Overview: The record gives the reactivity of an RNA of 177 nucleotides to DMS and 2A3. DMS adducts were read by reverse transcription with MarathonRT. The 2A3 profile rests on 13,688 reads.

RNA sequence: GGGAACGACUCGAGUAGAGUCGAAAAGAAGGUCGAGUGCACGACCAGAGAGUGCGGUGAGAGACCGACAAAGAGUUCGAAUCGGAACGAACUACCGCAGACGAUCGACUGAAGAUCGAAGUGAGAAAGGGUACUAAUAUUUCGAUAUUAGUACCCUAAAAGAAACAACAACAACAAC
Reactivity to DMS in 0.01 (KOAc 150mM, MgCl2 10mM, bicine 150mM(pH8.5), 24C), signal-to-noise 9, nucleotides 027 to 126: g010a190a110g000g000u000c000g000a200g040u030g020c130a110c000g010a020c020c010a090g000a130g020a140g010u020g000c000g000g000u010g010a090g000a180g000a090c010c010g000a030c060a080a090a110g010a050g000u010u000c030g010a150a140u030c110g000g020a140a080c030g000a030a030c010u010a140c060c040g000c050a050g010a270c040g010a020u000c010g000a120c160u050g000a100a120g000a020u010c010g010a150a180g010u010g000a090g030a070a090
Reactivity to 2A3 in 0.01 (KOAc 150mM, MgCl2 10mM, bicine 150mM(pH8.5), 24C), signal-to-noise 8, nucleotides 027 to 126: g130a060a030g020g000u020c030g020a050g110u220g110c100a040c060g000a010c010c010a000g030a000g010a000g080u150g020c000g000g010u030g010a030g000a010g030a020c000c020g000a010c030a000a130a000g200a010g040u070u090c010g060a080a070u160c060g050g050a060a070c010g010a020a000c010u030a060c020c020g000c010a030g030a150c010g000a040u000c010g050a080c160u200g060a080a010g010a030u010c020g010a080a020g130u120g070a070g110a130a120